Overview: Chemical mapping of a 207-nucleotide RNA with 2A3 and DMS. The data come from the RNA Mapping Database (RMDB), library M2RFOK. Values cover nucleotides 27 to 156. 2A3 adducts were read by reverse transcription with SuperScript II with manganese. DMS adducts were read by reverse transcription with MarathonRT.

RNA sequence: GGGAACGACUCGAGUAGAGUCGAAAAACAUGCUGGCCAACCCAACCCCACGAUCCUCCAUCGGCAUGAUCAUGAUGUGUUCUCAAAUAUCAGGCCAGUAAAUCACCAGGCUCGUGCUGGUAAAGGCAACUUAUGCCCAAGUUCGCUUGGGCAUAAACCACUAUGUAUCCUUCGGGAUACAUAGUGGAAAAGAAACAACAACAACAAC
Reactivity to 2A3 in 0.01 (KOAc 150mM, MgCl2 10mM, bicine 150mM(pH8.5), 24C), signal-to-noise 4, nucleotides 027 to 156: a000c030a030u070g010c010u020g010g000c000c000a040a030c050c000c010a020a040c000c020c020c010a040c040g060a040u030c000c010u040c010c020a090u060c030g030g000c080a040u040g040a060u080c030a080u100g060a050u070g120u020g090u200u040c130u010c070a050a090a010u170a080u080c040a050g000g000c000c000a000g030u020a000a040a040u140c020a030c020c020a000g250g020c030u060c070g130u160g030c010u010g000g000u060a120a050a040g030g010c030a040a020c050u000u010a000u000g000c000c000c000a020a010g000u030u070c120g030c110u010u020g020g000g000c000a000u010a000a000a000
Reactivity to DMS in 0.01 (KOAc 150mM, MgCl2 10mM, bicine 150mM(pH8.5), 24C), signal-to-noise 2, nucleotides 027 to 156: a070c030a050u000g020c030u010g010g040c030c020a080a120c030c030c030a140a080c050c000c020c030a060c070g020a120u010c010c030u000c040c030a100u000c070g020g000c050a090u000g010a050u000c030a150u010g010a080u010g000u000g010u010u000c060u010c040a110a100a140u010a110u000c040a150g010g000c000c000a050g020u000a010a080a120u050c050a060c040c030a060g010g030c070u000c040g040u000g010c000u020g040g040u000a010a060a070g020g030c050a060a150c060u000u000a000u000g020c000c030c010a010a050g000u000u000c300g000c020u000u000g000g000g050c010a000u000a010a010a150
Conditions: 150 mM KOAc, 10 mM MgCl2 and 150 mM bicine (pH 8.5), 24 C.